[RMDB]
RNA sequence: GGGAACGACUCGAGUAGAGUCGAAAAUAAAGGAUAAACAUGAGGCCGCCUGGUUUCAUGUUGAGCUACCUAAGUUUGGAGAUGUUCCAGACAGCCUCCAAGAAGGACAUGGUGUUAGGGUGCGCUUAAAAUCCUGCUACUCUUCUCACUGCUAUGGGAAUAGUAUCCGUUUCGACGGAUACUAUUCAAAAGAAACAACAACAACAAC
Reactivity to DMS in 0.01 (KOAc 150mM, MgCl2 10mM, bicine 150mM(pH8.5), 24C), signal-to-noise 2, nucleotides 027 to 156: u020a080a130a050g000g000a120u000a120a020a060c010a040u000g000a060g010g010c000c010g050c210c150u000g050g040u000u020u000c010a030u000g090u000u000g000a090g050c010u010a160c000c020u010a080a160g030u000u000u000g000g040a090g010a180u000g010u000u010c110c120a140g010a110c010a110g040c050c000u010c060c010a050a100g030a070a080g010g030a060c050a130u000g010g010u030g000u010u000a090g020g010g030u010g020c080g000c080u000u020a050a100a020a140u000c030c010u000g020c040u000a030c030u010c020u000u010c030u000c030a050c080u010g020c070u000a090u010g030g030